[RMDB]
RNA sequence: GGGAACGACUCGAGUAGAGUCGAAAAAGUUCGCGCUUCCGUGAAACGCGAAAAUAGGACGGUGGCUGCAAGUCGCAUCGCAAAACCGCGGCAAGUGGAGUUAGCGAGAGGAGGCUGGGUUUUGGCUAGAACACACGGUACUUCGGUACCGUGUGAAGGGUUAAAUUAACUUCGGUUAAUUUAACCCAAAAGAAACAACAACAACAAC
Reactivity to DMS in 0.01 (KOAc 150mM, MgCl2 10mM, bicine 150mM(pH8.5), 24C), signal-to-noise 2, nucleotides 027 to 156: a100g010u000u000c010g040c000g020c010u000u010c060c240g000u000g010a040a020a000c010g010c010g000a020a010a090a160u000a100g000g030a060c020g020g010u000g020g020c060u000g020c060a100a110g000u010c040g010c050a090u010c030g030c040a040a050a140a120c040c050g010c020g020g000c040a070a130g030u010g000g000a170g000u010u000a100g020c020g010a110g020a170g010g020a070g010g030c030u010g010g020g000u000u000u000u000g000g020c050u000a140g000a060a220c020a010c000a000c000g010g000u000a020c000u020u010c300g040g030u000a020c000c000g000u000g010u000g020a020a040
Reactivity to 2A3 in 0.01 (KOAc 150mM, MgCl2 10mM, bicine 150mM(pH8.5), 24C), signal-to-noise 3, nucleotides 027 to 156: a000g120u030u030c000g000c000g010c040u140u060c130c060g100u070g120a100a050a020c010g000c020g010a040a010a030a090u130a040g010g070a000c030g030g040u040g010g050c040u060g030c070a070a010g010u030c020g010c020a040u060c030g070c050a040a030a030a040c030c010g000c010g040g000c070a100a080g030u040g060g010a040g030u040u070a030g040c020g020a060g010a000g020g030a020g000g040c000u010g030g000g000u020u030u060u110g050g010c000u030a040g080a160a000c000a000c000a000c020g000g000u010a010c020u020u030c070g050g000u000a000c000c000g010u000g000u000g000a010a000
Conditions: 150 mM KOAc, 10 mM MgCl2 and 150 mM bicine (pH 8.5), 24 C. Chemical mapping of a 207-nucleotide RNA with DMS and 2A3. It was measured as part of the RMDB library M2RFPK. In probing experiments dimethyl sulfate is read out at A N1 and C N3, which are open when not base-paired.